[RMDB]
RNA sequence: GGGAACGACUCGAGUAGAGUCGAAAAGGCAAUAACGAUCUAAUUCUAAGCAAGUAAUGGAGAAAUGCCAGGGUCACUAUCUAGCCAUAAUAGUGCUUGACAGUAUGAUACUAACUGAACAAUAAGUAAAAGCGCUGGUACUUCGGUACCAGCGCAAGCUACAGGUAGUCUUCGGACUACCUGUAGCAAAAGAAACAACAACAACAAC
Reactivity to 2A3 in 0.01 (KOAc 150mM, MgCl2 10mM, bicine 150mM(pH8.5), 24C), signal-to-noise 2, nucleotides 027 to 156: g020g020c040a020a090u130a220a070c070g030a020u050c010u120a070a020u120u000c020u040a030a030g010c030a050a000g030u070a100a130u050g040g010a090g060a080a140a120u090g040c030c050a020g090g000g000u020c010a000c020u000a010u000c040u060a020g000c000c000a050u030a060a040u020a030g020u020g030c000u010u030g010a000c000a000g030u050a010u070g040a020u030a010c010u010a000a050c000u040g000a010a000c000a010a030u080a070a000g070u060a140a080a030a000g000c000g010c000u000g000g000u000a010c000u040u030c120g040g000u000a000c010c000a000g020c000g000c000a000a000